The record gives the reactivity of an RNA of 207 nucleotides to DMS and 2A3. Reactivities are given for positions 27 through 156. 2A3 adducts were read by reverse transcription with SuperScript II with manganese. The reactions ran in a buffer of 150 mM KOAc, 10 mM MgCl2 and 150 mM bicine (pH 8.5), at 24 C.
RNA sequence: GGGAACGACUCGAGUAGAGUCGAAAAAGCAAUUGCUGAUGAUGGCAAAUGAAACUGCAUAUGCUGCAAUUUAUCCAGCUGAGAUGCAGAAUGUUGCCCCUACUAAGUUAGUAAAGAUUGCCAAAAGAGCUGCAAUGCAAAUAGUCUCCGGUCAUGCCACGCAUACUAUCUUCGGAUAGUAUGCGUGAAAAGAAACAACAACAACAAC
Reactivity to DMS in 0.01 (KOAc 150mM, MgCl2 10mM, bicine 150mM(pH8.5), 24C), signal-to-noise 2, nucleotides 027 to 156: a060g000c020a060a110u000u010g000c010u000g010a100u010g000a150u000g010g040c010a030a070a070u000g000a140a150a180c030u010g010c030a020u000a100u000g000c000u040g030c080a080a120u010u010u010a170u030c110c000a100g030c020u000g010a160g010a110u000g000c000a020g000a100a090u010g020u010u010g020c000c030c060c040u000a090c050u000a070a300g010u010u010a040g010u020a100a070a150g000a100u000u010g040c000c040a030a060a100a120g010a150g000c030u000g000c020a080a120u010g010c030a040a060a110u000a070g010u010c040u000c010c000g070g010u000c040a140u000g000c020
Reactivity to 2A3 in 0.01 (KOAc 150mM, MgCl2 10mM, bicine 150mM(pH8.5), 24C), signal-to-noise 3, nucleotides 027 to 156: a010g050c030a040a110u060u040g010c070u040g040a180u040g020a060u050g010g030c010a030a030a070u210g050a130a110a080c000u000g000c010a020u030a020u120g010c000u000g020c030a050a090u090u190u110a150u190c030c000a000g000c000u000g030a100g020a200u010g020c000a000g030a080a160u220g050u040u010g020c000c000c030c000u020a080c020u060a100a150g110u180u060a000g000u030a000a000a070g010a060u050u080g060c030c010a010a070a050a100g060a060g010c010u030g010c060a010a080u050g030c010a000a140a000u040a030g020u000c020u000c060c010g080g040u080c060a030u120g010c000